[RMDB]
RNA sequence: GGGAACGACUCGAGUAGAGUCGAAAAAGGUGAAGCAGUACCACUGACCUUCCCAGAAAUAUUCUGUGUCAAAGAAUAAACUAAUACAGAAGAUAUAACAAGUAGGAGGUGGGAGGACUCAGCAGAGAACGCAUCUAAUUUUCGAAUUAGAUGCGUUAAAAGAAACAACAACAACAAC
Reactivity to 2A3 in 0.01 (KOAc 150mM, MgCl2 10mM, bicine 150mM(pH8.5), 24C), signal-to-noise 2, nucleotides 027 to 126: a000g080g020u040g020a060a010g040c040a010g070u070a100c020c030a030c060u060g130a210c020c000u020u010c000c000c000a010g050a000a180a000u120a000u010u000c000u000g040u040g030u030c060a170a040a020g100a110a090u190a230a090a050c040u050a020a020u020a060c000a000g030a030a000g010a050u080a000u020a160a060c050a060a000g040u040a020g040g030a040g010g080u020g000g020g030a040g000g010a050c020u030c040a030g090c040a040g070a020g040
Reactivity to DMS in 0.01 (KOAc 150mM, MgCl2 10mM, bicine 150mM(pH8.5), 24C), signal-to-noise 4, nucleotides 027 to 126: a080g010g030u000g020a130a070g020c080a090g010u000a080c070c030a090c050u000g000a100c050c060u000u000c000c010c000a160g010a090a130a080u000a060u000u000c010u000g010u000g000u000c090a070a070a080g000a170a150u010a100a050a130c050u010a040a030u010a030c010a030g000a020a020g000a080u010a070u000a060a090c070a070a090g010u000a060g010g030a300g000g030u000g000g010g020a090g010g000a080c050u000c040a100g040c090a070g000a130g010